An RNA of 177 nucleotides, treated with DMS and 2A3 and read out base by base.
Source: RMDB library OK1LIB, as collected in RNAgym.
RNA sequence: GGGAACGACUCGAGUAGAGUCGAAAAUGGGCGACGCAGUUGAGGAUCAUGCAGGCCCAGCUUCUGGCCAAGAUCGCCGCAGCGGUUGGCAACGAUGUGGUGCGAUCGCUAAAGAUCACCGGGCCGGGGCAUCGUACCGGUUCGCCGGUACGAUGCCAAAAGAAACAACAACAACAAC
Reactivity to DMS in 0.01 (KOAc 150mM, MgCl2 10mM, bicine 150mM(pH8.5), 24C), signal-to-noise 1, nucleotides 027 to 126: u010g030g080g000c060g010a250c140g000c080a050g000u000u030g020a260g000g000a200u080c020a150u000g000c070a120g000g010c030c000c000a010g000c160u030u000c060u000g040g000c090c110a090a170g010a000u000c090g070c230c190g000c180a030g030c000g000g000u000u000g000g000c110a080a070c070g000a220u080g000u020g000g090u050g000c000g050a020u000c000g000c020u000a160a040a160g000a030u030c030a000c050c120g030g000g020c000c090g000g020
Reactivity to 2A3 in 0.01 (KOAc 150mM, MgCl2 10mM, bicine 150mM(pH8.5), 24C), signal-to-noise 2, nucleotides 027 to 126: u030g000g000g000c050g040a110c030g000c000a040g040u090u110g250a220g140g080a210u240c130a100u100g020c020a040g060g000c000c000c000a000g000c010u090u000c000u010g000g000c000c000a050a050g000a010u030c000g040c120c050g020c020a020g010c000g000g010u020u030g210g000c000a050a000c040g200a170u190g100u180g050g000u070g010c000g010a000u000c000g000c000u040a170a030a010g020a010u040c000a000c040c150g010g000g000c000c000g010g000
Overview: Conditions: 150 mM KOAc, 10 mM MgCl2 and 150 mM bicine (pH 8.5), 24 C. Values cover nucleotides 27 to 126.